The record gives the reactivity of an RNA of 177 nucleotides to DMS and 2A3. For DMS the reverse transcriptase was MarathonRT. For 2A3, 12,990 sequencing reads were counted.
RNA sequence: GGGAACGACUCGAGUAGAGUCGAAAAGAGCGUUGGCGUAUAUCGCACUUCUGGCCAUGUCCUCGUUGUCCGGUACCGAGGCUUAUUAGCGAAAUAUCGGUUGUCGGAAUGCUAAUAUAUACGGAAAGGGUAAUUCUUACUUCGGUAGGAAUUACCCAAAAGAAACAACAACAACAAC
Reactivity to DMS in 0.01 (KOAc 150mM, MgCl2 10mM, bicine 150mM(pH8.5), 24C), signal-to-noise 7, nucleotides 027 to 126: g000a070g010c120g010u010u000g010g020c060g020u000a050u010a040u010c120g010c020a080c090u000u000c020u020g000g020c040c070a080u020g000u020c010c010u000c070g010u010u010g020u000c020c030g000g000u000a090c080c020g000a060g010g010c060u000u020a070u020u030a060g000c010g000a100a090a110u030a080u010c050g010g010u000u030g020u010c010g000g000a040a060u020g010c020u000a070a050u020a050u020a070u030a040c060g010g010a100a100a120
Reactivity to 2A3 in 0.01 (KOAc 150mM, MgCl2 10mM, bicine 150mM(pH8.5), 24C), signal-to-noise 9, nucleotides 027 to 126: g080a010g020c070g010u030u040g060g000c020g010u030a030u010a010u140c040g010c040a060c080u040u010c030u050g020g000c030c010a090u110g060u070c000c020u030c040g050u050u120g070u060c040c030g040g010u030a030c010c010g020a020g040g000c010u130u130a180u060u190a080g050c040g080a130a050a040u230a090u060c050g050g000u030u040g040u040c010g010g000a020a020u050g000c010u030a100a080u080a080u020a020u020a140c040g060g040a100a070a070